Notes
Conditions: 150 mM KOAc, 10 mM MgCl2 and 150 mM bicine (pH 8.5), 24 C. The record gives the reactivity of an RNA of 207 nucleotides to 2A3 and DMS. Values cover nucleotides 27 to 156.
RNA sequence: GGGAACGACUCGAGUAGAGUCGAAAAGUACGACAACUUAUUACGCAUCCUCGUACGAUCGAUGCUAAGAUUAGUGGCGAAAGCCACAAGCACGGGCAUUCAUAGGUCAGAUCCGAGAGGAUUUGACGUCCUAGCCUGUGCAAGACUAGGUCAGACAAUAAUGGGUAAAUUUCGAUUUACCCAUUAUAAAAGAAACAACAACAACAAC
Reactivity to 2A3 in 0.01 (KOAc 150mM, MgCl2 10mM, bicine 150mM(pH8.5), 24C), signal-to-noise 6, nucleotides 027 to 156: g040u040a030c030g040a010c050a100a030c130u110u130a070u210u110a130c070g000c010a010u030c000c020u040c030g050u130a090c110g020a030u090c030g020a010u030g030c030u040a030a010g020a130u090u210a020g000u000g000g010c000g030a060a010a000g000c000c000a000c010a010a000g000c000a000c010g000g020g000c020a040u070u090c040a050u230a160g080g030u000c000a000g010a000u000c000c000g030a040g010a020g070g000a000u000u000u000g010a000c000g050u080c010c030u030a040g000c010c000u010g000u010g000c000a000a000g030a010c040u030a010g070g030u060c040a010g030a100c060a020
Reactivity to DMS in 0.01 (KOAc 150mM, MgCl2 10mM, bicine 150mM(pH8.5), 24C), signal-to-noise 6, nucleotides 027 to 156: g020u020a070c030g030a100c060a070a110c070u000u020a150u000u000a140c180g010c050a090u000c050c030u010c030g030u000a070c060g010a150u000c040g010a060u000g020c010u000a070a080g010a130u000u000a090g040u000g000g010c000g010a180a110a270g020c000c000a010c010a050a140g010c020a050c020g000g010g010c010a210u000u000c080a120u000a080g030g030u000c000a020g000a010u000c000c000g000a300g010a300g030g010a020u000u000u000g010a020c000g010u000c030c040u010a160g020c010c000u000g010u000g010c050a040a040g010a080c040u000a040g000g000u000c030a210g000a090c090a100
Source: RMDB library OK3TST, as collected in RNAgym.